[RMDB]
An RNA of 177 nucleotides, treated with 2A3 and DMS and read out base by base. The RNA was probed in 150 mM KOAc, 10 mM MgCl2 and 150 mM bicine (pH 8.5) at 24 C. Source: RMDB library RFM100, as collected in RNAgym.

RNA sequence: GGGAACGACUCGAGUAGAGUCGAAAAUGGCACAAGCACUGCAUGGUCUCUUGCAGAUAAUUCAUAACACGCAGCCCUCAACGAUGAAGGCUGCGUCUCCCGAGAGAACGGGACCGGACAAAGGCGUCCUAGGCACGUAUUUCGAUACGUGCCUAGGAAAAGAAACAACAACAACAAC
Reactivity to 2A3 in 0.01 (KOAc 150mM, MgCl2 10mM, bicine 150mM(pH8.5), 24C), signal-to-noise 3, nucleotides 027 to 126: u070g080g030c060a080c050a130a030g020c060a040c040u000g000c000a020u070g020g050u010c010u000c000u020u040g000c020a010g020a110u110a070a030u260u230c060a090u080a100a040c000a000c050g000c020a000g040c000c000c000u010c020a100a210c210g130a090u210g010a000a000g000g000c000u000g000c000g000u000c000u000c000c000c000g040a050g020a010g040a130a030c050g000g000g000a010c000c010g020g000a020c060a040a110a000g070g060c070g000u000
Reactivity to DMS in 0.01 (KOAc 150mM, MgCl2 10mM, bicine 150mM(pH8.5), 24C), signal-to-noise 1, nucleotides 027 to 126: u000g000g010c260a030c200a020a000g010c130a300c000u000g000c000a030u000g000g010u000c040u000c000u000u020g000c000a070g000a040u040a070a070u020u020c010a020u000a070a010c300a000c000g000c030a000g000c040c000c050u000c000a070a300c220g130a040u020g090a090a070g000g000c000u000g000c000g000u000c090u010c000c050c000g000a030g000a070g000a000a090c270g000g000g000a040c150c040g000g000a050c040a070a040a120g010g000c070g000u000
The 2A3 profile rests on 2,416 reads. As a SHAPE reagent, 2A3 marks flexible, mostly unpaired nucleotides at the ribose 2'-OH.